[RMDB]
RNA sequence: GGGAACGACUCGAGUAGAGUCGAAAAAGGCAAGAGAUCUCACCCAAGGUGUCACUUUUGCAAGGAGCCAUCUUGGCCACUUUACCGGCUCAAAUUAACGGCGACACAUCCAUGGUGGUCGACACGAGGUCCAUUUCAAUUUCGAUUGAAAUGGACCAAAAGAAACAACAACAACAAC
Reactivity to DMS in 0.01 (KOAc 150mM, MgCl2 10mM, bicine 150mM(pH8.5), 24C), signal-to-noise 2, nucleotides 027 to 126: a090g020g000c020a050a040g000a110g000a200u000c040u000c020a150c060c010c100a120a060g000g000u000g070u000c050a090c040u000u000u000u010g010c090a130a060g000g000a020g030c080c010a100u000c030u000u010g010g000c020c040a040c090u000u000u010a070c150c060g000g000c000u010c050a050a060a120u000u000a060a110c110g000g000c050g010a080c040a050c090a030u000c040c120a070u000g010g010u000g010g030u000c050g000a040c260a040c130g000a090
Reactivity to 2A3 in 0.01 (KOAc 150mM, MgCl2 10mM, bicine 150mM(pH8.5), 24C), signal-to-noise 2, nucleotides 027 to 126: a000g060g010c000a020a040g040a030g000a300u020c010u010c050a060c030c030c000a070a030g080g000u040g010u050c030a070c050u130u050u070u160g050c040a080a040g080g040a000g000c000c000a050u020c050u100u090g040g010c000c000a040c050u150u150u100a160c040c010g000g030c020u060c110a020a120a080u170u080a170a050c070g050g000c040g080a000c040a010c010a060u070c080c020a040u150g010g000u010g000g000u010c050g000a030c000a000c070g040a040